[RMDB]
RNA sequence: GGGAACGACUCGAGUAGAGUCGAAAACAACCACCCAACUGUAGCAUAACCUCUGGCGUGUUGCAAAGCGGUUUGGUGAAAAUGUCACAUCCCAGUGGAGAUGUUGAGGCUUGUAUGGUUCAGGUUAAAGCAUCGAGCUUCGGCUCGAUGAAAAGAAACAACAACAACAAC
Reactivity to 2A3 in 0.01 (KOAc 150mM, MgCl2 10mM, bicine 150mM(pH8.5), 24C), signal-to-noise 3, nucleotides 027 to 129: c040a000a050c020c000a030c030c000c000a050a010c000u070g040u110a020g080c030a010u030a110a030c000c050u130c140u120g150g010c110g060u100g020u010u080g000c060a090a030a090g030c050g020g000u010u050u050g010g000u000g020a040a040a030a000u220g040u050c060a020c000a090u070c000c000c000a000g020u080g070g080a080g000a000u060g040u080u060g000a000g000g000c030u010u040g040u190a090u210g100g060u060u040c040a050g000g020u070u110a040a030a000g050
Reactivity to DMS in 0.01 (KOAc 150mM, MgCl2 10mM, bicine 150mM(pH8.5), 24C), signal-to-noise 4, nucleotides 027 to 129: c130a090a130c200c010a090c080c010c040a120a100c000u030g010u040a100g050c050a050u010a090a090c000c000u060c160u030g000g000c000g050u030g050u040u060g060c020a050a080a120g050c090g010g020u040u000u060g010g020u020g020a050a070a060a010u000g030u030c000a140c010a110u030c000c010c050a050g010u000g020g010a140g010a100u020g010u050u000g000a080g020g030c020u020u000g040u100a000u000g020g040u050u010c150a060g020g010u000u000a040a110a100g020